[RMDB]
Structure probing data (DMS and 2A3) for a 177-nucleotide construct.

RNA sequence: GGGAACGACUCGAGUAGAGUCGAAAAGAUAUGGAGAUCAAGAGCGAUGAGCAUCACCUCGGAAACGAGGUAUGCGAGCUCUGAUCUCCUAAGUCAAAACUCACGAGGGGUUCGCCCCUCGUGAGAACAGUACAUGAGACUUCGGUCUCAUGUACUGAAAAGAAACAACAACAACAAC
Reactivity to DMS in 0.01 (KOAc 150mM, MgCl2 10mM, bicine 150mM(pH8.5), 24C), signal-to-noise 2, nucleotides 027 to 126: g010a000u000a020u020g000g000a030g030a010u000c010a010a030g030a020g030c010g040a230u020g000a190g000c000a000u000c240a020c000c000u000c000g030g000a010a010a010c000g010a010g010g010u000a000u000g000c000g000a020g020c000u000c000u000g000a000u000c000u010c000c000u000a000a060g010u000c010a140a100a140a190c010u000c010a010c000g030a010g010g010g020g020u000u000c300g010c020c010c000c000u000c000g000u000g000a000g010a020a110
Reactivity to 2A3 in 0.01 (KOAc 150mM, MgCl2 10mM, bicine 150mM(pH8.5), 24C), signal-to-noise 3, nucleotides 027 to 126: g000a010u000a010u020g010g000a020g000a020u030c180a300a110g000a050g000c020g180a280u300g030a150g000c020a010u020c160a020c020c000u010c000g000g000a010a010a010c010g000a000g010g000u000a000u000g010c020g020a030g000c000u000c010u020g000a000u010c010u010c000c010u000a000a000g020u000c000a020a040a050a160c000u000c000a010c000g000a000g000g030g030g040u110u140c300g190c000c030c000c000u000c010g010u000g000a000g000a000a000
2A3 adducts were read by reverse transcription with SuperScript II with manganese. For DMS, 3,376 sequencing reads were counted. Values cover nucleotides 27 to 126. The reactions ran in a buffer of 150 mM KOAc, 10 mM MgCl2 and 150 mM bicine (pH 8.5), at 24 C. DMS adducts were read by reverse transcription with MarathonRT.